[RMDB]
RNA sequence: GGGAACGACUCGAGUAGAGUCGAAAAGUCAAAUAAGAAUUCUACCAUCUUGGAUUCGCGUUGACCGGACCGAAAUGAACCGCCAUAAAUAACAUCCAAAGUUUUCUUGGUAGGCUUAGAUAAUUGAUGCUUGAAUGAAAUUCGUUUCAUUCAAGCAAAAAGAAACAACAACAACAAC
Reactivity to 2A3 in 0.01 (KOAc 150mM, MgCl2 10mM, bicine 150mM(pH8.5), 24C), signal-to-noise 2, nucleotides 027 to 126: g020u020c000a040a000a100u170a130a050g000a030a030u080u040c020u060a130c060c070a150u110c090u090u040g050g000a020u020u030c020g040c070g070u050u020g010a010c040c010g000g030a000c000c070g050a010a060a180u090g020a040a010c000c010g040c000c000a010u050a100a100a020u080a040a040c020a000u100c070c050a140a050a040g020u050u060u060u000c050u030u000g070g000u050a140g090g020c040u040u060a020g020a060u160a220a100u090u080g090a070
Reactivity to DMS in 0.01 (KOAc 150mM, MgCl2 10mM, bicine 150mM(pH8.5), 24C), signal-to-noise 3, nucleotides 027 to 126: g000u000c020a020a020a070u000a080a290g000a040a020u000u010c010u010a130c110c120a130u000c160u000u000g020g020a020u000u000c020g000c250g000u000u000g020a020c010c030g010g010a180c020c020g020a070a090a110u010g020a060a060c030c010g010c030c020a020u000a060a030a020u000a030a030c030a080u010c130c250a080a100a120g010u000u000u010u010c090u000u000g000g010u000a040g040g020c040u000u000a050g000a110u010a060a090u000u000g000a210
This 177-nucleotide RNA was probed chemically with 2A3 and DMS. For 2A3 the reverse transcriptase was SuperScript II with manganese. The RNA was probed in 150 mM KOAc, 10 mM MgCl2 and 150 mM bicine (pH 8.5) at 24 C.